[RMDB]
RNA sequence: GGGAACGACUCGAGUAGAGUCGAAAACCUCAAAGCUACGCGCUAAUGAUAAUAUCUUAUCAGUUAGAUUCACUGCUAACAAAAUUGUUGGUGGUGCUCCUACAUGGUUUAAUGCGUUGCGUGACUUACCUACAUUAAGCUUCGGCUUAAUGUAGGUAAAAGAAACAACAACAACAAC
Reactivity to 2A3 in 0.01 (KOAc 150mM, MgCl2 10mM, bicine 150mM(pH8.5), 24C), signal-to-noise 5, nucleotides 027 to 126: c010c000u060c040a150a120a010g020c000u040a000c000g010c000g000c020u070a090a030u090g050a010u020a110a070u120a140u140c090u090u050a010u030c010a030g030u050u060a010g010a040u060u030c010a000c000u000g020c000u010a010a010c030a070a160a170a290u200u110g010u010u000g000g000u010g000g000u000g000c020u030c020c000u040a080c010a130u110g040g050u070u070u130a060a000u070g000c000g010u010u020g000c030g050u080g030a010c020u010u010
Reactivity to DMS in 0.01 (KOAc 150mM, MgCl2 10mM, bicine 150mM(pH8.5), 24C), signal-to-noise 2, nucleotides 027 to 126: c000c010u000c140a030a140a160g010c020u000a030c000g000c030g040c050u000a010a100u000g010a010u000a030a030u000a300u000c160u020u010a040u000c020a040g040u000u010a020g020a040u010u010c000a000c000u000g010c000u000a010a010c020a020a160a150a170u010u010g010u000u000g000g010u010g040g050u000g010c300u000c020c010u000a020c060a090u000g000g010u020u020u000a050a090u000g000c030g000u000u000g010c000g000u030g010a130c130u000u000